[RMDB]
RNA sequence: GGGAACGACUCGAGUAGAGUCGAAAAGGCAACGUGGACCAGUGUCAGCCAGCGACCGUGUGGAGUUUCAACUUCACAACUUGCUGCGAGAUCAACUAUCCAUUUCAAGCUCAUCUCCGGGUGAUGCUCGUCAUGGUCCAUUAGGUAAAGCAAAACCCGGCUUAGCUCUGUUCGCAGAGCUAAGCCGAAAAGAAACAACAACAACAAC
Reactivity to 2A3 in 0.01 (KOAc 150mM, MgCl2 10mM, bicine 150mM(pH8.5), 24C), signal-to-noise 1, nucleotides 027 to 156: g050g000c010a000a000c050g040u040g000g040a010c030c000a010g030u030g000u090c000a010g050c010c010a010g000c010g050a030c130c130g010u010g000u000g250g000a030g030u200u300u120c060a170a090c030u000u000c000a000c000a030a060c000u000u130g000c000u000g020c030g070a130g000a180u240c120a040a060c160u230a080u040c020c060a100u040u090u170c040a040a050g000c040u000c000a020u040c020u060c130c170g030g000g000u090g010a150u290g000c000u010c120g070u030c030a010u010g020g000u090c030c010a000u000u100a040g050g000u010a060a260a020g000c070a050a170a010a010c000c040